Structure probing data (DMS and 2A3) for a 177-nucleotide construct. Conditions: 150 mM KOAc, 10 mM MgCl2 and 150 mM bicine (pH 8.5), 24 C. For 2A3 the reverse transcriptase was SuperScript II with manganese. Source: RMDB library OK1LIB, as collected in RNAgym.
RNA sequence: GGGAACGACUCGAGUAGAGUCGAAAAGCAGAGGAACUGCGAAUCCAGAACUUGCUAAAACAACUGCAGCAAGCAGUGACAAACAACGAUUUGACCAUUUAUUACCAACCGAUAAUGAGUCUACAGCCAUUACGUCAUAGUUCGCUAUGACGUAAUGAAAAGAAACAACAACAACAAC
Reactivity to DMS in 0.01 (KOAc 150mM, MgCl2 10mM, bicine 150mM(pH8.5), 24C), signal-to-noise 9, nucleotides 027 to 126: g000c010a010g000a200g010g020a120a090c010u000g000c030g000a120a130u020c020c020a100g010a100a130c060u000u000g000c020u020a080a070a100a110c200a100a070c060u010g010c100a110g010c110a070a080g010c040a040g000u000g010a070c180a080a100a090c130a070a090c180g010a120u020u020u020g000a030c010c010a030u010u020u030a020u030u010a110c070c070a050a090c150c070g000a030u010a020a030u000g010a090g000u000c010u010a080c170a110g000c170
Reactivity to 2A3 in 0.01 (KOAc 150mM, MgCl2 10mM, bicine 150mM(pH8.5), 24C), signal-to-noise 9, nucleotides 027 to 126: g010c020a010g050a110g110g090a150a100c010u010g000c010g030a020a060u050c010c010a050g050a090a080c030u050u070g010c070u170a050a080a050a070c100a060a030c040u060g020c040a070g040c040a090a060g000c010a030g020u040g090a050c060a070a140a020c040a070a040c090g140a170u100u040u170g010a010c000c010a010u010u110u110a080u050u100a110c060c080a120a030c050c040g020a020u040a080a020u060g040a030g060u000c020u060a040c030a020g060c030